[RMDB]
RNA sequence: GGGAACGACUCGAGUAGAGUCGAAAAGGAACUUGCGGGCUGGACCAACGACCGGCUGGUGGAAGAGCGCCUCUACCGUCUGGCCCGUACGGAAUGGGUGUUCGGCCGGACCAAUUCCAGCAUUGUACUAUAUUAUCCGUUUCGACGGAUAAUAUAGAAAAGAAACAACAACAACAAC
Reactivity to DMS in 0.01 (KOAc 150mM, MgCl2 10mM, bicine 150mM(pH8.5), 24C), signal-to-noise 8, nucleotides 027 to 126: g000g010a110a110c090u010u000g020c040g010g010g020c010u000g010g010a050c110c140a090a130c180g010a110c020c020g000g010c020u000g020g030u000g000g010a100a090g000a100g010c080g010c030c020u000c140u000a130c050c050g000u000c030u000g010g010c000c000c010g000u000a010c060g010g000a100a060u000g000g000g010u000g010u000u010c030g010g010c010c010g000g000a120c050c040a080a160u000u000c010c000a080g010c080a100u000u000g010u000a150
Reactivity to 2A3 in 0.01 (KOAc 150mM, MgCl2 10mM, bicine 150mM(pH8.5), 24C), signal-to-noise 7, nucleotides 027 to 126: g050g000a060a060c040u070u090g010c050g010g030g000c010u020g010g010a020c020c050a110a090c110g060a050c020c020g030g020c020u050g030g090u080g060g090a120a070g020a040g060c030g020c020c000u050c030u100a240c030c010g010u000c010u010g030g010c000c000c000g000u000a000c010g000g030a090a120u060g030g000g000u040g020u050u080c040g020g000c020c000g000g020a040c010c000a010a040u060u010c000c000a010g010c030a080u040u160g040u050a060
The record gives the reactivity of an RNA of 177 nucleotides to DMS and 2A3.
Values cover nucleotides 27 to 126.
Conditions: 150 mM KOAc, 10 mM MgCl2 and 150 mM bicine (pH 8.5), 24 C.
For DMS, 14,671 sequencing reads were counted.
The 2A3 profile rests on 25,307 reads.
For DMS the reverse transcriptase was MarathonRT.